[RMDB]
RNA sequence: GGGAACGACUCGAGUAGAGUCGAAAAUCUUUUUCUGUAAUCUAUGUGCCUUUAUGAAGAAGUCACACACACACAUGCUUACAUAAUAAAUACAUGGGGAUACGUGUCUAGAAGUUUUACUAGUGCCCGUAACGGACCUCUUCGGAGGUCCGUUACGAAAAGAAACAACAACAACAAC
Reactivity to 2A3 in 0.01 (KOAc 150mM, MgCl2 10mM, bicine 150mM(pH8.5), 24C), signal-to-noise 1, nucleotides 027 to 126: u000c000u050u230u050u020u090c040u110g030u000a060a040u190c000u090a110u130g000u070g060c060c000u000u040u100a000u260g100a030a140g020a110a000g060u040c040a040c000a000c000a000c050a000c000a000c000a170u050g040c000u040u070a000c000a030u060a120a040u080a000a230a000u160a000c000a100u040g000g000g020g000a000u000a100c100g010u000g050u020c000u000a120g000a170a120g060u000u070u070u110a080c000u000a000g000u000g180c040c080